The record gives the reactivity of an RNA of 177 nucleotides to 2A3 and DMS.
The 2A3 profile rests on 39,905 reads.
The RNA was probed in 150 mM KOAc, 10 mM MgCl2 and 150 mM bicine (pH 8.5) at 24 C.
Source: RMDB library OK2TST, as collected in RNAgym.
RNA sequence: GGGAACGACUCGAGUAGAGUCGAAAAGUCGCUGACGACGGCCGUGGUCGGCAUCAAAUCGAUGAUCGCGAGCGGCGACGCCGCGACCGAAUGGCAUCUCGUGAUGGCGGCGACGCUCGUCGCGAUACCAGUGAAAAUUAUUCGUAAUUUUCACUGGAAAAGAAACAACAACAACAAC
Reactivity to 2A3 in 0.01 (KOAc 150mM, MgCl2 10mM, bicine 150mM(pH8.5), 24C), signal-to-noise 9, nucleotides 027 to 126: g030u020c020g000c090u090g020a020c040g010a010c030g130g030c080c050g020u070g050g030u100c010g020g060c010a020u030c030a030a160a110u160c100g050a040u090g040a040u060c010g000c010g040a050g090c010g000g000c010g010a030c060g010c000c000g000c030g070a040c030c000g050a070a070u120g130g030c050a080u030c040u020c070g090u120g050a180u050g100g040c000g000g000c000g000a010c010g000c030u070c020g030u000c000g000c000g000a000u020a050
Reactivity to DMS in 0.01 (KOAc 150mM, MgCl2 10mM, bicine 150mM(pH8.5), 24C), signal-to-noise 9, nucleotides 027 to 126: g010u000c030g010c060u000g020a060c030g010a050c140g010g030c100c060g030u000g020g010u000c020g010g010c010a050u000c040a040a110a110u010c110g000a070u010g000a060u000c010g020c010g010a210g010c050g010g010c050g010a110c060g010c000c000g010c000g000a140c260c010g000a040a070u010g010g010c110a080u000c060u000c100g000u010g010a070u000g010g010c000g010g010c010g000a220c010g000c040u000c030g020u000c000g010c010g010a030u000a070